[RMDB]
RNA sequence: GGGAACGACUCGAGUAGAGUCGAAAAAGCAACGAGUGUGUGUGGGACGUUUUAUCCCAAGCUCUGAGUAGAGCACGCCCUCACACACACCGCGAGCGAGCAUCAGCAGAGCGCAAACGCUGGUAAAGAUAGAAAGGACAUUCGUGUCCUUUCUAUCAAAAGAAACAACAACAACAAC
Reactivity to DMS in 0.01 (KOAc 150mM, MgCl2 10mM, bicine 150mM(pH8.5), 24C), signal-to-noise 8, nucleotides 027 to 126: a100g010c050a180a050c020g000a220g020u000g010u000g020u000g020u010g010g020g000a030c010g010u000u000u000u010a110u010c040c030c040a070a110g010c000u000c000u000g010a180g020u010a050g010a020g010c010a070c010g000c010c010c010u000c020a010c000a010c010a000c000a010c010c020g000c030g020a190g010c040g000a130g000c090a050u000c020a040g010c040a100g010a100g010c080g000c110a070a080a100c130g000c020u010g010g010u010a060a080a110
Reactivity to 2A3 in 0.01 (KOAc 150mM, MgCl2 10mM, bicine 150mM(pH8.5), 24C), signal-to-noise 7, nucleotides 027 to 126: a000g090c060a060a050c030g050a110g050u000g000u000g000u000g000u020g000g010g020a030c010g010u000u050u160u210a180u100c030c010c020a000a010g000c000u000c010u070g300a270g170u300a020g160a000g010c000a000c010g000c000c030c000u080c000a000c000a000c000a000c000a000c000c000g070c030g020a020g010c010g010a020g000c010a040u070c020a010g010c010a020g030a040g110c060g000c080a140a050a010c050g000c020u010g030g020u110a110a070a030